[RMDB]
Chemical mapping of a 177-nucleotide RNA with 2A3 and DMS. For 2A3 the reverse transcriptase was SuperScript II with manganese.

RNA sequence: GGGAACGACUCGAGUAGAGUCGAAAAUGAGGGCUAAUUUCUGACACUUCGAGAUAUGUUUUGUAGGAUUGUCGUCCUAUUUACGUGUUUAAGCCUGGGGAGAGGUGUAAUAGCGAGAACCAGGUGUGUUAUGUACGGGUUUCGACCCGUACAUAACAAAAGAAACAACAACAACAAC
Reactivity to 2A3 in 0.01 (KOAc 150mM, MgCl2 10mM, bicine 150mM(pH8.5), 24C), signal-to-noise 4, nucleotides 027 to 126: u140g020a050g010g000g000c020u070a040a100u020u070u090c040u070g040a010c000a000c040u040u060c040g100a060g040a130u110a020u160g110u080u120u080u090g030u020a010g010g010a040u030u100g130u140c070g000u020c000c000u000a010u040u150u070a030c080g010u000g030u030u030u090a040a010g020c000c010u010g000g010g000g010a170g010a030g000g080u010g000u050a060a120u090a080g100c100g040a070g030a070a020c000c020a000g000g000u020g010u000
Reactivity to DMS in 0.01 (KOAc 150mM, MgCl2 10mM, bicine 150mM(pH8.5), 24C), signal-to-noise 2, nucleotides 027 to 126: u000g030a050g050g010g020c010u060a040a080u010u010u010c020u010g000a110c030a010c020u010u030c030g030a110g030a090u010a030u030g000u000u000u000u010g000u000a040g000g000a010u030u050g000u030c300g000u000c020c000u000a000u000u020u040a040c090g000u000g000u000u000u000a040a080g030c010c010u010g000g000g000g000a200g010a060g040g000u000g020u000a050a090u040a260g000c010g030a030g000a300a250c020c040a040g000g020u000g010u020